[RMDB]
RNA sequence: GGGAACGACUCGAGUAGAGUCGAAAACUUGGUUUAGGGUUCCAGGCUAGCCCUAUCUAUCGGUCGAGAUGCGAGCGCUUAAGCUCAAAUUGAGUGGCUGAGUUAGUGGUGAACGUAUCCCUAUGUUAAAACGGUAGCUGCUUCGGCAGCUACCGAAUCUAAUAGAUGAGUUCGCUCAUCUAUUAGAAAAAGAAACAACAACAACAAC
Reactivity to DMS in 0.01 (KOAc 150mM, MgCl2 10mM, bicine 150mM(pH8.5), 24C), signal-to-noise 3, nucleotides 027 to 156: c020u000u000g010g010u010u010u000a060g010g020g020u030u000c060c040a110g060g020c020u010a300g000c000c010c010u020a040u000c040u000a100u000c030g040g020u000c020g020a300g010a040u000g000c300g020a050g030c020g020c240u010u020a070a190g020c020u000c010a040a210a070u000u000g010a280g020u000g010g000c020u020g020a070g010u000u000a030g050u010g040g010u000g000a070a070c030g000u000a070u000c010c000c000u010a300u000g020u000u000a040a080a050a210c000g020g020u000a010g020c050u000g000c000u010u000c260g050g040c000a020g010c010u010a000c010c000g010a010a000
Reactivity to 2A3 in 0.01 (KOAc 150mM, MgCl2 10mM, bicine 150mM(pH8.5), 24C), signal-to-noise 3, nucleotides 027 to 156: c020u020u020g040g040u100u120u040a030g030g000g000u120u060c050c030a030g020g080c040u030a010g000c000c000c000u000a020u000c050u030a130u050c010g010g040u020c010g020a040g000a110u000g030c020g000a010g000c020g030c190u240u210a120a060g000c000u010c000a000a000a030u010u010g020a040g060u150g050g000c000u000g010a000g010u010u010a070g010u130g150g010u030g010a090a020c010g060u080a070u090c020c000c010u050a060u090g070u040u160a050a090a020a050c010g000g000u000a000g010c000u000g020c020u020u090c160g100g000c020a010g000c000u000a010c000c010g000a000a000